RNA sequence: GGGAACGACUCGAGUAGAGUCGAAAAGAUAUGGAUGGUCCGAUUAGAGGCUUGGACCUCGGAAACGAGCUAGCCUAUUCUCGGAGCCAUCCUAAGUCAAAGAAUGUAAGCUUCGGCUUACAUUCAAGUAAAAAACAAACUUCGGUUUGUUUUUUACAAAAGAAACAACAACAACAAC
Reactivity to DMS in 0.01 (KOAc 150mM, MgCl2 10mM, bicine 150mM(pH8.5), 24C), signal-to-noise 2, nucleotides 027 to 126: g010a020u000a300u020g000g010a030u000g010g000u010c000c000g000a040u000u000a050g020a040g010g010c010u000u000g040g010a070c300c010u010c000g000g000a080a130a150c010g010a010g010c030u000a010g010c000c000u000a060u000u000c040u000c010g040g000a050g040c020c000a010u010c000c000u000a020a050g010u000c040a090a160a160g010a010a010u000g000u010a010a000g000c000u010u010c250g020g010c000u000u000a000c010a020u000u010c000a050a130
Reactivity to 2A3 in 0.01 (KOAc 150mM, MgCl2 10mM, bicine 150mM(pH8.5), 24C), signal-to-noise 2, nucleotides 027 to 126: g010a030u060a010u110g000g000a010u010g000g010u010c010c000g000a000u040u160a150g130a020g060g000c050u070u070g070g150a240c040c020u010c010g000g000a060a010a010c000g000a000g000c020u020a000g000c000c000u030a220u210u110c030u000c030g030g000a040g130c000c000a000u020c000c000u000a020a000g000u010c010a000a150a150g000a010a000u000g000u010a000a010g000c010u030u200c300g180g010c010u000u000a000c000a010u000u000c000a000a010